[RMDB]
RNA sequence: GGGAACGACUCGAGUAGAGUCGAAAACUUGGUCAUUUAGAGGAAGUAAAAGUCGUAACAAGGUUUUGUUCUCGAGUAACGAGGAUGGAUUGGACUCCCUUCCGCGGUGACACUCACAGAAGCCUUUGCAGCCUCGCAAGAGGUCUGGCGCGACAGUAGUUCCAUUGUAGUUCGCUACAAUGGAACUAAAAGAAACAACAACAACAAC
Reactivity to 2A3 in 0.01 (KOAc 150mM, MgCl2 10mM, bicine 150mM(pH8.5), 24C), signal-to-noise 4, nucleotides 027 to 156: c030u040u070g020g000u070c050a100u060u060u130a140g040a070g060g040a060a020g010u140a100a120a060a060g010u020c040g020u070a060a030c040a080a070g040g000u010u030u130u090g070u060u080c090u030c070g040a080g030u100a130a060c010g000a020g000g020a010u040g040g020a020u050u120g080g010a030c000u060c020c020c000u000u010c010c010g040c030g070g010u040g050a040c050a020c070u020c000a060c030a030g050a110a000g010c010c020u040u050u090g010c020a000g020c000c000u000c000g000c010a020a050g000a000g000g020u070c010u010g030g020c010g010c010g030a020c010a040g030u030
Reactivity to DMS in 0.01 (KOAc 150mM, MgCl2 10mM, bicine 150mM(pH8.5), 24C), signal-to-noise 1, nucleotides 027 to 156: c020u010u000g050g020u000c020a070u010u020u000a080g060a040g000g020a100a100g020u000a080a050a120a090g000u030c000g020u000a100a210c130a090a100g020g030u000u000u000u020g050u000u000c020u010c000g060a230g040u000a060a090c040g000a030g000g010a040u000g000g010a090u010u020g000g000a040c090u010c060c000c010u000u000c000c020g000c000g000g030u000g000a080c070a060c050u000c040a100c020a200g000a040a060g000c010c050u000u000u000g040c040a180g010c020c010u010c020g020c240a090a130g000a020g000g010u010c020u000g020g020c060g010c030g020a030c080a110g000u000